[RMDB]
RNA sequence: GGGAACGACUCGAGUAGAGUCGAAAAUGUCACACAGUAGCGAGGGAUGCAAUUAAUUCCAUCUACACCAAGCUCAAGGCUUGGAUUUCGACUAGUGUCGAGUCGUUCCCACUCGCUACGCCCACAAGCUUCACACCUUAUUCGUAAGGUGUGAAGCAAAAGAAACAACAACAACAAC
Reactivity to DMS in 0.01 (KOAc 150mM, MgCl2 10mM, bicine 150mM(pH8.5), 24C), signal-to-noise 1, nucleotides 027 to 126: u010g000u010c220a110c150a250c100a100g000u000a020g040c050g010a000g000g000g040a000u000g010c280a070a030u000u010a110a140u030u000c190c030a070u000c040u000a040c080a220c040c000a000a000g000c000u000c140a100a090g000g010c000u000u020g010g000a190u000u000u000c000g000a040c010u010a040g000u000g020u000c010g000a000g010u000c000g010u000u010c000c000c000a010c020u000c000g040c010u000a020c020g060c000c070c000a030c110a110a100